[RMDB]
RNA sequence: GGGAACGACUCGAGUAGAGUCGAAAAAAACAGGGUUUCUGAUAACCGGUGCGACAAUAUGCCCUUCCAAGGCACUGACCGGCACGGAGAAAAACUAUAAUGCCAUGUCGUAUAACGGCUAGGCACCGACGUACAAAUAGUUCGCUAUUUGUACGUCAAAAGAAACAACAACAACAAC
Reactivity to DMS in 0.01 (KOAc 150mM, MgCl2 10mM, bicine 150mM(pH8.5), 24C), signal-to-noise 4, nucleotides 027 to 126: a050a050a070c140a070g010g010g000u000u000u010c000u000g020a150u010a140a100c010c000g000g010u010g010c160g010a040c180a040a060u010a070u000g010c020c000c020u000u000c220c170a140a110g000g010c010a040c020u010g000a050c050c030g020g020c090a060c140g000g000a070g000a040a040a020a040a020c100u010a070u010a060a140u000g000c000c010a250u010g000u000c010g010u010a090u010a150a130c010g000g000c000u010a270g000g000c000a010c250c100
Reactivity to 2A3 in 0.01 (KOAc 150mM, MgCl2 10mM, bicine 150mM(pH8.5), 24C), signal-to-noise 4, nucleotides 027 to 126: a000a000a030c120a050g020g000g010u040u030u020c030u030g090a160u060a140a040c010c010g010g010u040g010c010g030a010c040a050a010u040a010u110g010c000c000c000u120u070c080c010a010a020g000g000c000a010c020u020g010a020c000c010g000g020c070a020c100g080g010a010g010a000a030a020a000a000c040u060a060u080a300a090u070g000c000c000a030u040g000u000c000g020u090a100u050a300a070c010g000g000c010u080a150g030g020c010a000c010c050
Chemical mapping of a 177-nucleotide RNA with DMS and 2A3.
It was measured as part of the RMDB library RFMREP.
For DMS, 3,401 sequencing reads were counted.
For 2A3, 5,822 sequencing reads were counted.